[RMDB]
RNA sequence: GGGAACGACUCGAGUAGAGUCGAAAAAAAAAGAGCGUAAUCGCGUCAUUGAGUGACGUGAAGAACAUCCAAGUGUGCUGUCUACAGUCGUAGAUAGCGCACAAUACGCUGAUGAUCAUUCAAAAAACUAAAUUCAUUGCUUCGGCAAUGAAUUUAGAAAAGAAACAACAACAACAAC
Reactivity to DMS in 0.01 (KOAc 150mM, MgCl2 10mM, bicine 150mM(pH8.5), 24C), signal-to-noise 2, nucleotides 027 to 126: a020a020a060a030a090g000a050g010c000g030u000a090a080u010c010g010c000g010u000c000a020u000u020g010a250g040u010g000a000c020g050u000g010a050a080g020a090a050c120a140u000c030c090a110a070g000u000g000u000g010c000u010g020u000c010u000a000c000a120g010u010c270g010u000a000g000a000u000a000g030c000g070c000a000c000a020a030u000a000c000g020c010u000g010a090u000g000a090u010c130a110u000u010c060a010a040a040a020a070a080
Reactivity to 2A3 in 0.01 (KOAc 150mM, MgCl2 10mM, bicine 150mM(pH8.5), 24C), signal-to-noise 2, nucleotides 027 to 126: a010a010a010a000a030g120a000g050c020g010u030a010a010u000c000g000c000g000u010c000a020u100u290g220a160g290u040g000a000c000g000u010g020a040a030g040a040a060c030a030u040c020c020a060a060g000u010g000u010g020c000u000g010u000c010u000a070c050a200g200u200c070g000u070a000g000a020u000a010g000c010g020c010a000c000a010a000u000a000c000g000c000u030g020a040u130g010a040u090c190a140u120u120c060a070a090a030a010a000a050